[RMDB]
RNA sequence: GGGAACGACUCGAGUAGAGUCGAAAACUGUCAGAUUGACAUGGCGAAGAAGCUAUCGGCUGGGGACAACAGGCGCUUCAUCUUGCAGGCGUUCCGUGGUAUCGGGAAGUCCUUCAUUACGUGUGCCUCCCUUCACAUGCUUCGGCAUGUGAAGGGAAAAAGAAACAACAACAACAAC
Reactivity to DMS in 0.01 (KOAc 150mM, MgCl2 10mM, bicine 150mM(pH8.5), 24C), signal-to-noise 1, nucleotides 027 to 126: c040u000g010u040c040a020g070a100u120u050g000a040c100a080u030g000g000c080g010a090a070g020a120a050g010c090u010a000u000c010g010g000c010u000g000g000g020g000a180c160a040a100c230a080g000g000c090g000c140u000u030c080a080u000c080u060u070g000c040a000g010g000c020g030u060u000c030c010g000u000g000g050u050a020u000c000g070g000g030a060a070g000u080c000c000u020u000c060a020u000u010a210c180g030u000g020u000g000c030c020
The record gives the reactivity of an RNA of 177 nucleotides to DMS. The reactions ran in a buffer of 150 mM KOAc, 10 mM MgCl2 and 150 mM bicine (pH 8.5), at 24 C. It was measured as part of the RMDB library OK1LIB. For DMS, 1,400 sequencing reads were counted.